[RMDB]
Chemical mapping of a 177-nucleotide RNA with DMS. Conditions: 150 mM KOAc, 10 mM MgCl2 and 150 mM bicine (pH 8.5), 24 C.
RNA sequence: GGGAACGACUCGAGUAGAGUCGAAAAUGAAUUAUCCGCUGCUUGGAGGAAUUUCGCGAGCUCUUGCCCACAAUGGUGCUGCACUCGGCGGAUCGUUUUCGAGCGGCUGCUGCACCACACGCUGUGAGCGUCAGUAUCGUUUCGACGAUACUGACGCAAAAGAAACAACAACAACAAC
Reactivity to DMS in 0.01 (KOAc 150mM, MgCl2 10mM, bicine 150mM(pH8.5), 24C), signal-to-noise 2, nucleotides 027 to 126: u000g000a090a100u010u000a050u000c040c040g020c080u000g010c060u020u010g000g010a130g020g010a080a080u000u010u000c040g030c040g000a110g000c060u000c050u000u010g000c000c020c020a110c180a090a060u010g000g020u000g010c020u000g010c040a030c030u000c010g030g000c000g000g010a010u020c300g000u000u000u000u000c040g000a120g010c010g020g000c140u000g000c030u000g000c010a010c000c010a060c110a070c140g010c080u000g000u000g010a200

Notes
It was measured as part of the RMDB library OK2TRN. DMS adducts were read by reverse transcription with MarathonRT.